Overview: This 207-nucleotide RNA was probed chemically with 2A3.
RNA sequence: GGGAACGACUCGAGUAGAGUCGAAAAAGCACUGGUACGAUACGUCGUACCAGUGCAGUCGUUGGGAUGGAACGCAAUUAAAUACAUGUGUGACGUGUAUUCGCGAACGACGUAAUUAUUUUUCAAAAUCACGCUAUCGUGUUCGCACGAUAGCGAACGCAUAUGUCGAGUUCGCUCGACAUAUGCGAAAAGAAACAACAACAACAAC
Reactivity to 2A3 in 0.01 (KOAc 150mM, MgCl2 10mM, bicine 150mM(pH8.5), 24C), signal-to-noise 2, nucleotides 027 to 156: a010g010c000a000c000u000g000g000u000a000c000g020a020u010a070c290g120u000c000g020u000a000c000c000a000g010u000g000c000a000g000u010c020g000u010u020g110g060g010a120u140g060g090a190a050c020g000c020a030a040u230u040a140a050a080u110a010c030a040u030g120u000g110u160g190a110c030g000u000g000u000a040u060u050c050g000c000g030a020a000c010g030a010c040g030u010a040a030u120u140a150u070u030u010u070u140c040a040a020a000a130u130c060a000c050g020c000u000a000u000c000g010u000g010u030u020c170g010c080a010c000g000a010u000a000g000c000g000a010a000
2A3 adducts were read by reverse transcription with SuperScript II with manganese. For 2A3, 723 sequencing reads were counted. It was measured as part of the RMDB library M2RFPK. Values cover nucleotides 27 to 156.